An RNA of 177 nucleotides, treated with DMS and 2A3 and read out base by base. 2A3 adducts were read by reverse transcription with SuperScript II with manganese. For DMS the reverse transcriptase was MarathonRT.

RNA sequence: GGGAACGACUCGAGUAGAGUCGAAAAAACACAUUAAAAUAGAAUCGUAAUCAAGCAAUCAGUCCUUUAUAUUUUCCUCCUAGUGAGUAUCUGGAAAACAGGUGCAGAAAUGGAUCAUUUGAGACACUUAACCCCUGAUAUUCGUAUCAGGGGUUAAAAAAGAAACAACAACAACAAC
Reactivity to DMS in 0.01 (KOAc 150mM, MgCl2 10mM, bicine 150mM(pH8.5), 24C), signal-to-noise 3, nucleotides 027 to 126: a060a050c080a070c080a080u030u020a050a030a110a060u030a080g010a090a070u020c070g000u000a100a070u000c050a060a080g010c120a060a040u010c070a070g000u030c020c020u010u010u030a070u010a070u030u010u000u010c040c020u010c030c050u020a070g020u010g000a110g030u010a010u000c020u000g000g020a100a040a080a060c080a010g030g020u000g010c060a070g000a060a060a050u010g000g020a060u000c040a060u010u010u020g000a070g020a050c140a070c150
Reactivity to 2A3 in 0.01 (KOAc 150mM, MgCl2 10mM, bicine 150mM(pH8.5), 24C), signal-to-noise 1, nucleotides 027 to 126: a000a000c110a000c030a030u120u300a030a140a010a300u140a120g020a030a020u030c020g020u060a130a000u100c050a030a020g080c110a140a080u000c000a000g020u140c030c000u070u070u000a050u050a000u190u160u000u000c000c000u070c040c030u000a000g000u000g060a030g000u040a000u000c000u040g070g010a000a000a000a210c000a020g000g000u040g000c000a000g110a090a070a040u080g040g000a000u030c060a040u020u000u110g050a040g080a030c020a000c110